Structure probing data (DMS and 2A3) for a 207-nucleotide construct.
Source: RMDB library M2RFPK, as collected in RNAgym.
For 2A3 the reverse transcriptase was SuperScript II with manganese.
Conditions: 150 mM KOAc, 10 mM MgCl2 and 150 mM bicine (pH 8.5), 24 C.
For DMS, 1,954 sequencing reads were counted.
[RMDB]
RNA sequence: GGGAACGACUCGAGUAGAGUCGAAAAUUACCGCCCAGGAUGGGGUGCAGCGUUCCUGCAAUAUCCAGGGCACCUAGGUGCAGCCUUGUAAUUUUAGUGGACUUUAGGCUAAAGAAUUUCACUAGCAAAAAUCUUUAAGGGUUCGCCCUUAAAGAAACAUUCCAUUCUUGUUCGCAAGAAUGGAAUGAAAAGAAACAACAACAACAAC
Reactivity to DMS in 0.01 (KOAc 150mM, MgCl2 10mM, bicine 150mM(pH8.5), 24C), signal-to-noise 1, nucleotides 027 to 156: u010u000a090c000c030g030c020c000c000a170g010g000a050u010g010g010g050g060u000g000c030a040g010c080g010u000u010c150c000u000g000c000a070a150u010a050u000c030c010a100g010g030g050c040a030c060c020u000a070g030g020u000g000c030a080g010c030c050u000u000g010u010a070a120u010u000u010u010a050g020u000g000g010a050c070u000u000u000a110g030g000c040u000a070a040a180g000a150a100u010u000u000c010a020c070u030a070g060c070a020a100a090a170a110u000c010u020u000u010a000a030g030g030g030u000u000c300g020c000c000c020u000u000a000a000a030g000a040a040a150
Reactivity to 2A3 in 0.01 (KOAc 150mM, MgCl2 10mM, bicine 150mM(pH8.5), 24C), signal-to-noise 3, nucleotides 027 to 156: u060u030a040c020c020g000c000c000c000a010g060g000a000u030g020g050g010g140u050g000c000a000g020c010g070u120u110c010c000u010g000c010a020a040u020a020u090c010c010a010g000g000g000c010a030c000c020u040a060g040g010u060g100c030a020g080c040c010u040u070g060u110a080a130u090u120u100u080a010g010u010g030g010a020c010u060u080u110a060g090g010c060u070a070a070a020g030a020a040u000u090u110c040a030c010u030a020g030c050a010a090a140a130a230u000c000u010u000u000a000a000g000g000g040u010u070c130g050c000c010c000u000u010a000a000a000g000a000a000a000